[RMDB]
RNA sequence: GGGAACGACUCGAGUAGAGUCGAAAACCGGUGCCAUUCGCGGAAGGUCUCACCCCACUGACCGAUCAAUGGAGUAGGGUAUUGAACAAGAUGGGCUAAGCGUAGGCAGAGAAUCCUGUAGGCCGCAGGGGAGAUCGCGCACCCUGAAGUGCUGGUACAGCUUCGAAAUUACAGUUGCGGACGCCGAGGGUUUUAACGGUCGCCGAAGGCAACACAGAAGCAUCCGUUUUGGCGAGGAUGUGGAGGUCCGCCGGAGUCCACAGGCCACCCACUCGUUCGCGAGUGGGAAAAGAAACAACAACAACAAC
Reactivity to DMS in 0.01 (KOAc 150mM, MgCl2 10mM, bicine 150mM(pH8.5), 24C), signal-to-noise 2, nucleotides 027 to 266: c070c030g040g010u020g000c050c020a140u000u000c030g000c060g000g000a160a130g000g020u000c020u000c140a040c040c000c030c040a060c050u000g020a090c050c050g010a160u010c170a090a080u000g020g000a060g010u030a060g010g060g000u020a110u010u030g000a100a100c120a120a080g000a130u010g010g010g000c020u000a170a220g000c010g000u000a070g000g010c050a050g000a210g000a150a110u010c090c030u000g000u000a140g010g000c030c030g000c030a020g000g000g000g020a100g000a070u000c080g000c120g020c140a060c030c020c060u020g000a090a120g020u000g030c040u000g000g000u000a090c100a110g020c140u010u000c020g020a040a070a040u000u030a090c210a140g000u000u000g010c050g030g010a060c100g000c060c030g000a150g000g000g000u000u010u060u000a100a130c050g000g020u010c100g000c000c000g040a060a300g000g010c050a090a070c050a060c040a050g000a190a160g000c010a020u000c050c020g000u010u000u000u000g010g000c030g020a070g000g010a030u000g000u000g000g010a250g000g000u010c040c000g000c090c030g010g000a070g010u000c040c070a060c110a080g010g000c110c080a220
Reactivity to 2A3 in 0.01 (KOAc 150mM, MgCl2 10mM, bicine 150mM(pH8.5), 24C), signal-to-noise 1, nucleotides 027 to 266: c010c000g050g000u030g010c010c050a190u000u120c110g000c070g050g070a160a140g000g000u010c020u060c040a100c020c090c040c000a050c040u180g130a080c030c070g070a220u280c160a100a130u300g010g000a060g020u090a120g070g060g000u070a100u160u200g020a060a020c010a040a040g110a240u050g010g040g000c010u050a180a000g010c000g000u030a050g030g000c040a000g000a010g020a130a000u050c020c020u000g010u040a010g040g000c020c010g000c030a010g030g010g000g000a190g000a030u130c060g010c010g000c040a040c020c000c000u050g050a090a010g020u110g130c030u040g050g040u090a080c050a030g000c010u030u020c060g060a040a040a040u260u080a190c040a160g020u030u030g010c010g020g010a010c000g000c020c000g000a030g000g040g000u000u120u000u120a070a010c030g010g000u010c060g050c130c010g070a060a000g020g040c010a000a090c060a090c020a040g120a220a010g020c000a020u000c070c030g060u010u060u260u210g050g110c100g000a000g020g000a000u000g000u000g050g020a020g060g000u040c010c000g000c000c030g000g000a040g030u010c020c050a070c020a030g140g000c000c000a020

Conditions: 150 mM KOAc, 10 mM MgCl2 and 150 mM bicine (pH 8.5), 24 C. Chemical mapping of a 307-nucleotide RNA with DMS and 2A3. 2A3 adducts were read by reverse transcription with SuperScript II with manganese.